Structure probing data (DMS and 2A3) for a 177-nucleotide construct. For DMS the reverse transcriptase was MarathonRT. Conditions: 150 mM KOAc, 10 mM MgCl2 and 150 mM bicine (pH 8.5), 24 C.
RNA sequence: GGGAACGACUCGAGUAGAGUCGAAAAUAGACAACCAGGACCUUAAUGGCAAGUGGUAUGAUUUUGGUGACUUCGUAAUCACUCAACCUGGUUCAGGAGUAGCUAUAGUUGAUAGCUACUAUUCUUACGCUUUAAUUUUGUUCGCAAAAUUAAAGCGAAAAGAAACAACAACAACAAC
Reactivity to DMS in 0.01 (KOAc 150mM, MgCl2 10mM, bicine 150mM(pH8.5), 24C), signal-to-noise 2, nucleotides 027 to 126: u030a110g000a110c110a030a040c020c010a010g010g010a300c030c020u000u010a100a100u010g030g000c300a120a030g000u000g010g010u000a020u000g010a060u010u010u000u000g010g010u010g020a050c040u010u000c030g020u000a040a040u000c000a010c020u010c150a050a210c030c010u000g000g010u000u000c110a110g020g000a030g010u000a000g010c000u000a000u000a130g000u000u000g010a170u000a010g000c010u000a000c000u000a050u000u000c020u010u000a300
Reactivity to 2A3 in 0.01 (KOAc 150mM, MgCl2 10mM, bicine 150mM(pH8.5), 24C), signal-to-noise 2, nucleotides 027 to 126: u110a020g100a040c020a020a020c010c010a000g010g030a090c000c020u130u220a170a020u220g070g000c060a080a010g010u010g040g000u020a040u040g030a030u000u020u060u160g180g030u170g060a030c000u030u020c030g020u050a050a080u050c010a000c020u060c000a000a040c020c010u020g000g000u030u010c020a040g000g090a010g020u030a010g000c000u010a000u040a060g170u130u160g090a010u000a000g010c000u000a000c000u000a030u020u010c000u010u010a010